[RMDB]
RNA sequence: GGGAACGACUCGAGUAGAGUCGAAAACUCUCGAGGAGACUCGAGAGAGCAUGCUUCGGCAUGCAAGCGUCGGCAUGGCAUCUCCACCUCCUCGAGGUCCGACGUGGGCAUCGGAAGGAGCACGCACGUGCAGUCCGGUGGCUAAGAGAGAGCCAAACCUGAUAAUCCUAUUCGUAGGAUUAUCAGGAAAAGAAACAACAACAACAAC
Reactivity to 2A3 in 0.01 (KOAc 150mM, MgCl2 10mM, bicine 150mM(pH8.5), 24C), signal-to-noise 2, nucleotides 027 to 156: c000u000c000u010c000g000a010g010g020a070g030a020c000u000c000g000a000g000a000g010a000g000c000a000u000g000c000u080u060c210g160g000c020a000u000g000c050a020a020g020c010g000u000c000g010g000c070a090u100g020g000c010a160u040c000u000c000c000a000c010c000u040c030c090u150c180g020a000g020g000u000c000c000g000a000c020g000u020g000g000g030c000a000u010c000g000g040a040a050g100g130a110g030c010a000c010g140c030a130c210g010u000g000c000a000g040u000c000c000g030g020u010g040g120c000u000a000a000g000a000g000a000g000a000g000c000c000a010a000a000

The record gives the reactivity of an RNA of 207 nucleotides to 2A3.
2A3 adducts were read by reverse transcription with SuperScript II with manganese.
The RNA was probed in 150 mM KOAc, 10 mM MgCl2 and 150 mM bicine (pH 8.5) at 24 C.
For 2A3, 3,408 sequencing reads were counted.